[RMDB]
RNA sequence: GGGAACGACUCGAGUAGAGUCGAAAAGUCACUUCAGGAACAUGAGUGUUAUAUACUGUCCAAUUGGAUUGAUUGUAACUGACAUCAUAGCCAUUAGGAACAACAGACUCAUUGACAGUGUAAACAAGGUGGCAUGACGCUUCGGCGUCAUGCCACCAAAAGAAACAACAACAACAAC
Reactivity to 2A3 in 0.01 (KOAc 150mM, MgCl2 10mM, bicine 150mM(pH8.5), 24C), signal-to-noise 1, nucleotides 027 to 126: g090u010c000a000c020u060u040c060a050g170g000a010a020c050a070u000g020a030g300u110g000u180u050a020u000a000u000a000c080u090g090u000c000c030a000a000u100u100g000g110a250u080u080g050a230u000u000g060u090a120a180c160u080g160a000c000a060u110c000a000u280a000g190c230c000a000u230u000a000g020g020a030a090c000a000a000c000a000g080a000c000u000c180a000u000u000g000a000c000a000g000u000g180u000a000a000a000c020a000a000

Source: RMDB library OK1LIB, as collected in RNAgym. The record gives the reactivity of an RNA of 177 nucleotides to 2A3. The RNA was probed in 150 mM KOAc, 10 mM MgCl2 and 150 mM bicine (pH 8.5) at 24 C. The 2A3 profile rests on 358 reads. 2A3 adducts were read by reverse transcription with SuperScript II with manganese. Values are in units of 0.01, from 0 to 300, in steps of 10.